[RMDB]
Description:
An RNA of 177 nucleotides, treated with DMS and read out base by base. Reactivities are given for positions 27 through 126. It was measured as part of the RMDB library OK2TRN.

RNA sequence: GGGAACGACUCGAGUAGAGUCGAAAAUCUGUUUACAAGUUAUCGUUAAGUCCAUGUCUGACUACGAUUCCGUAAACGGAAGCCAGUUUGCGUCAAGUCCGACAUGGACUCUUGGCAGAACUGAUCAAGUCGUGCAUACCUUCGGGUAUGCACGACUAAAAGAAACAACAACAACAAC
Reactivity to DMS in 0.01 (KOAc 150mM, MgCl2 10mM, bicine 150mM(pH8.5), 24C), signal-to-noise 1, nucleotides 027 to 126: u000c000u020g000u000u000u010a070c070a100a000g010u020u000a070u000c230g010u010u000a100a050g010u000c000c020a020u000g010u000c030u000g010a010c000u000a120c170g000a060u000u000c180c070g060u000a000a050a050c040g000g000a120a100g000c140c110a130g000u000u000u000g000c090g010u000c020a190a030g000u010c010c090g000a020c010a000u000g010g010a010c000u000c030u020u000g000g020c080a090g010a040a030c020u000g030a110u010c140a030